Chemical mapping of a 207-nucleotide RNA with 2A3.
RNA sequence: GGGAACGACUCGAGUAGAGUCGAAAAGACAUCGUGGGGGAUUAGGGCAGCCGGUGAUCCUGAGCAGAUGGUGCACACCGUUGCAGUUUCCUCUGGUUCCGGUGAUUCCUUCCUAGACGCGGUUGCAGCCCUAGGUGUUGACGUCUAUGUCACGUCAGUCGGUAAAUCCAUUCGUGGAUUUACCGACAAAAGAAACAACAACAACAAC
Reactivity to 2A3 in 0.01 (KOAc 150mM, MgCl2 10mM, bicine 150mM(pH8.5), 24C), signal-to-noise 1, nucleotides 027 to 156: g020a000c010a030u010c030g050u090g000g070g000g030g030a010u030u300a030g030g020g010c010a000g070c000c000g000g000u070g070a130u020c000c000u010g000a030g010c030a000g060a050u070g010g120u070g060c030a020c020a040c120c240g030u140u130g020c020a110g050u000u010u000c010c020u040c010u040g030g000u000u010c000c000g030g000u000g010a110u000u100c000c040u010u110c000c020u100a120g020a250c030g020c030g070g080u180u090g100c090a020g000c030c010c010u070a080g000g080u070g110u110u040g000a000c000g000u070c090u280a260u300g120u180c000a000c010g040u080c020a010